[RMDB]
RNA sequence: GGGAACGACUCGAGUAGAGUCGAAAAGAUAUGGAUCGUCAUGAGGUGAUGACCUCGGAAACGAGCAAGCCUACCAUGCGAUCCUAAGUCAAACGUAUUCUCGUCCGUUCGCGGACGAGAAUACGAAGGUUUAACAAGUCUUCGGACUUGUUAAACCAAAAGAAACAACAACAACAAC
Reactivity to 2A3 in 0.01 (KOAc 150mM, MgCl2 10mM, bicine 150mM(pH8.5), 24C), signal-to-noise 2, nucleotides 027 to 126: g020a000u050a050u100g000g000a000u000c000g230u160c080a000u030g010a020g090g070u050g040a300u170g060a130c030c030u000c000g020g020a080a070a040c030g010a000g000c020a070a000g000c020c000u060a210c060c060a000u010g030c000g000a010u060c000c010u030a080a040g060u020c020a090a030a070c020g000u020a000u010u010c000u010c000g000u000c020c000g030u050u040c300g000c030g130g010a000c000g000a000g000a000a010u000a000c000g010a000a010
Reactivity to DMS in 0.01 (KOAc 150mM, MgCl2 10mM, bicine 150mM(pH8.5), 24C), signal-to-noise 2, nucleotides 027 to 126: g010a100u000a300u010g030g000a020u000c020g000u000c000a040u000g010a020g000g030u000g010a120u010g000a120c300c010u000c000g000g010a120a070a170c010g000a010g040c060a060a300g010c000c000u000a060c280c010a010u000g010c000g010a000u000c000c000u000a030a060g000u000c020a080a100a300c000g020u000a000u000u000c000u000c000g020u000c000c000g010u000u010c250g010c000g000g000a000c020g010a000g020a020a000u000a000c000g020a020a080
This 177-nucleotide RNA was probed chemically with 2A3 and DMS. Values are in units of 0.01, from 0 to 300, in steps of 10. For 2A3, 4,883 sequencing reads were counted. Reactivities are given for positions 27 through 126. It was measured as part of the RMDB library TTRDEL. 2A3 adducts were read by reverse transcription with SuperScript II with manganese.